An RNA of 177 nucleotides, treated with DMS and 2A3 and read out base by base.
Source: RMDB library OK1LIB, as collected in RNAgym.
[RMDB]
RNA sequence: GGGAACGACUCGAGUAGAGUCGAAAAUAUCAUAUCAUCUAUUAGAGCACGUCUGUUGAGAGCUUUAGUGACCUGUUCGUUUACCUCUCUGUAAAUCUUGAAUCCUUUACAUUGUAUCAAAGCUGGAAUACUCCAGUUCGUUCGCGAACUGGAGUAUAAAAGAAACAACAACAACAAC
Reactivity to DMS in 0.01 (KOAc 150mM, MgCl2 10mM, bicine 150mM(pH8.5), 24C), signal-to-noise 1, nucleotides 027 to 126: u000a020u020c080a020u000a190u000c000a000u000c000u000a070u030u010a110g000a160g000c120a120c170g000u020c050u000g000u000u000g040a000g000a030g000c050u020u020u050a030g010u020g000a100c000c000u000g000u010u050c060g090u020u010u000a040c250c010u000c000u030c050u000g000u080a010a090a010u030c030u000u000g000a090a040u000c030c010u000u040u000a000c150a110u000u000g010u040a010u000c120a020a100a200g070c010u000g040g000a240
Reactivity to 2A3 in 0.01 (KOAc 150mM, MgCl2 10mM, bicine 150mM(pH8.5), 24C), signal-to-noise 2, nucleotides 027 to 126: u110a020u120c140a000u070a020u030c020a000u020c010u090a050u090u030a090g020a020g000c030a000c060g020u040c160u110g090u090u060g060a110g000a070g000c050u300u130u150a060g040u010g070a060c000c000u100g070u090u080c010g000u000u010u010a090c070c050u060c050u040c000u000g100u200a000a030a030u020c030u040u130g140a010a060u040c000c000u000u060u040a130c150a000u000u110g010u080a020u210c040a070a040a030g000c000u000g000g020a030
About this RNA:
The RNA was probed in 150 mM KOAc, 10 mM MgCl2 and 150 mM bicine (pH 8.5) at 24 C.